[RMDB]
RNA sequence: GGGAACGACUCGAGUAGAGUCGAAAAACAUAUUACGAUAUGAUUCAGAUGGUGUCUUACUGGUUCGUACCAAGGGACAUAAUUGUUUCUUGUUUCCAACCAAAGAACAAGUGGCGAGCCUGAAUAAAAAACUGACUGCCGUUCGCGGCAGUCAGAACAUAACGCUAGCCUUCGGGCUAGCGUUAUGAAAAGAAACAACAACAACAAC
Reactivity to 2A3 in 0.01 (KOAc 150mM, MgCl2 10mM, bicine 150mM(pH8.5), 24C), signal-to-noise 1, nucleotides 027 to 156: a000c070a040u150a060u110u110a050c090g020a020u030a020u080g080a060u090u060c060a050g050a150u050g050g070u050g050u060c030u030u210a200c070u030g030g000u030u010c020g010u040a010c030c010a020a020g000g000g030a000c000a010u200a170a110u140u080g010u000u000u030c000u010u020g010u000u030u030c000c000a030a030c010c010a160a040a080g040a060a000c030a060a100g070u020g110g000c040g010a010g050c020c020u030g050a040a020u080a060a070a000a030a000a020c010u000g000a000c000u000g000c000c040g010u030u000c220g010c000g040g000c020a000g000u010c000a000g000a040a000